[RMDB]
RNA sequence: GGGAACGACUCGAGUAGAGUCGAAAAGAAGUGGGCGAGGUGUAGGCCCCAAGCAGUCCCAGGCUGAGAGCCCGGCACAGGACUGGAAAUACUCAUCAGGGUUCACAGGCUGUCUGGUCUUAAGGAACGCAGAGGACAUAUUCGUAUGUCCUCUGCGAAAAGAAACAACAACAACAAC
Reactivity to DMS in 0.01 (KOAc 150mM, MgCl2 10mM, bicine 150mM(pH8.5), 24C), signal-to-noise 1, nucleotides 027 to 126: g060a150a090g030u010g020g050g040c080g000a070g040g050u000g060u020a110g000g000c010c000c010c030a020a070g020c070a080g020u000c000c000c100a240g000g000c030u000g000a290g000a070g000c030c030c000g030g050c090a030c050a150g010g010a040c000u010g010g010a080a130a040u000a140c080u020c070a140u030c140a140g000g030g000u010u000c070a140c130a060g000g010c000u000g040u000c090u000g000g000u010c050u020u040a030a060g010g000a130a070